[RMDB]
RNA sequence: GGGAACGACUCGAGUAGAGUCGAAAACCAAGAGUGGCGUUAAUGACAUUUGUAUGUUUGAGAAUAAAACCACUUUGCCUACUAAUAUAGCUUUUGAACUCUAUGCUAAGCGUGCUGUACGCUCGCAGAGAUGUACGCUGUUCGCAGCGUACAUCUCAAAAGAAACAACAACAACAAC
Reactivity to 2A3 in 0.01 (KOAc 150mM, MgCl2 10mM, bicine 150mM(pH8.5), 24C), signal-to-noise 2, nucleotides 027 to 126: c000c000a010a000g020a000g020u000g000g020c080g020u000u100a040a020u170g010a010c040a010u130u190u200g240u150a080u040g030u020u080u090g100a090g050a060a060u080a100a040a020a020c000c000a000c000u050u000u090g040c010c010u110a110c020u020a060a120u110a030u030a100g020c000u070u140u020u100g060a060a030c000u010c020u080a030u090g000c010u040a070a010g020c000g010u010g000c040u070g100u100a060c060g010c000u010c010g000c020a000
Reactivity to DMS in 0.01 (KOAc 150mM, MgCl2 10mM, bicine 150mM(pH8.5), 24C), signal-to-noise 1, nucleotides 027 to 126: c040c020a110a070g010a020g010u030g000g000c120g040u000u010a090a120u010g000a020c030a040u020u030u050g030u000a020u000g000u000u000u010g010a130g040a130a050u000a030a060a210a130c020c000a020c020u000u000u000g000c070c030u000a060c140u010a090a090u000a080u030a050g000c060u000u000u000u000g000a030a090c140u050c030u000a040u000g000c040u000a070a000g010c000g010u000g000c060u000g000u010a060c090g000c000u000c130g020c090a110
About this RNA
Source: RMDB library 15KREP, as collected in RNAgym. This 177-nucleotide RNA was probed chemically with 2A3 and DMS. Reactivities are given for positions 27 through 126. The RNA was probed in 150 mM KOAc, 10 mM MgCl2 and 150 mM bicine (pH 8.5) at 24 C. For DMS, 680 sequencing reads were counted.